Chemical mapping of a 207-nucleotide RNA with 2A3. The 2A3 profile rests on 910 reads.

[RMDB]
RNA sequence: GGGAACGACUCGAGUAGAGUCGAAAAUCCUAAGUCAUUUGGGAUGGGAAUCGAAGAACUUACAUUGAGUUUCGGAAACGAAACAAUGAUGUGUAAGGGAGAUUCCCUGACCAAAUGAUAUGGAAAACCUCAAUUUGGGUUCGCCCAAAUUGAGGAACAGCAGCAUCCUGUUCGCAGGAUGCUGCUGAAAAGAAACAACAACAACAAC
Reactivity to 2A3 in 0.01 (KOAc 150mM, MgCl2 10mM, bicine 150mM(pH8.5), 24C), signal-to-noise 1, nucleotides 027 to 156: u030c000c000u020a080a010g030u010c000a000u010u010u010g040g000g000a020u100g000g000g010a010a000u010c010g120a280a000g010a040a080c000u010u000a000c000a010u040u050g040a000g010u000u000u000c000g000g020a090a040a020c000g000a010a000a000c030a030a300u210g050a090u050g000u010g000u010a000a000g030g000g010a080g000a000u000u020c040c000c010u000g000a010c000c000a000a000a000u000g000a000u020a050u050g030g020a070a030a040a120c000c000u010c010a020a020u010u000u000g030g000g030u000u150c290g180c000c010c000a000a000a000u000u000g010a000g010g000a010a020
Source: RMDB library RNAMAK, as collected in RNAgym.